RNA sequence: GGGAACGACUCGAGUAGAGUCGAAAACCAGCUGCUUCUUCUUGUUCUCCAGGGCCUUCCUUCUUCUGUGGUCCCGCCUCUCCCGGUCGGUGAACCCUCUGGGCUUGGGUCUCCUCCCAGGUCCGGAUUAGGCACCAGUUCGCUGGUGCCAAAAGAAACAACAACAACAAC
Reactivity to 2A3 in 0.01 (KOAc 150mM, MgCl2 10mM, bicine 150mM(pH8.5), 24C), signal-to-noise 4, nucleotides 027 to 129: c000c000a010g050c050u090g010c000u040u070c000u080u020c000u050u090g020u040u010c050u040c040c010a060g030g020g020c020c020u050u010c000c000u020u070c000u050u050c040u050g090u090g050g050u040c020c000c000g010c010c000u040c030u020c010c000c010g020g030u040c030g050g020u050g050a050a070c000c000c000u010c030u010g000g010g020c020u030u000g020g000g010u030c060u050c050c000u010c020c000c000a000g000g030u000c000c000g000g000a020u030u090a050
Reactivity to DMS in 0.01 (KOAc 150mM, MgCl2 10mM, bicine 150mM(pH8.5), 24C), signal-to-noise 3, nucleotides 027 to 129: c050c010a000g030c060u000g010c060u010u010c050u000u050c050u000u050g030u020u030c030u020c060c070a170g040g000g040c000c040u020u060c030c060u030u040c020u020u020c070u050g040u040g000g000u000c030c040c080g010c050c030u020c060u040c000c000c000g000g000u020c070g000g030u000g020a110a070c030c010c090u030c020u000g010g010g040c010u050u090g040g060g000u000c190u060c160c090u030c000c020c000a040g010g030u030c060c010g030g020a040u000u000a090